[RMDB]
RNA sequence: GGGAACGACUCGAGUAGAGUCGAAAACUGGGGGUGUACAACUUGAAGAAUUCCCAAUAUAGAGAUGAUAUUUGAAGUUGUGAGACUGAAGGAGAAUGCUAAGGGAGUGAGUGUAGAAAGAAAAGGUGGAAAGUCUGAGGCUGAUCUUCAUUUGCAAGUGCUUUUAGUCAUUCGUGACUAAAAGCACAAAAGAAACAACAACAACAAC
Reactivity to 2A3 in 0.01 (KOAc 150mM, MgCl2 10mM, bicine 150mM(pH8.5), 24C), signal-to-noise 1, nucleotides 027 to 156: c070u090g000g000g000g000g000u000g010u020a040c040a150a010c010u050u140g050a060a050g020a030a010u080u040c000c010c000a150a020u170a050u120a070g160a000g000a080u210g020a020u100a160u190u230u250g040a040a040g000u020u000g000u050g030a030g030a060c090u040g010a060a020g090g000a070g040a070a000u090g070c020u040a020a070g000g060g000a030g000u090g000a010g010u060g010u020a060g050a030a020a010g140a020a030a020a020g050g040u070g000g000a030a010a000g040u000c070u050g010a030g030g000c000u010g000a020u040c040u050u010c050a070u100u050u230g040c000a090a120
An RNA of 207 nucleotides, treated with 2A3 and read out base by base.
The RNA was probed in 150 mM KOAc, 10 mM MgCl2 and 150 mM bicine (pH 8.5) at 24 C.
High 2A3 reactivity points to a flexible backbone, as in loops and unpaired stretches.
The 2A3 profile rests on 458 reads.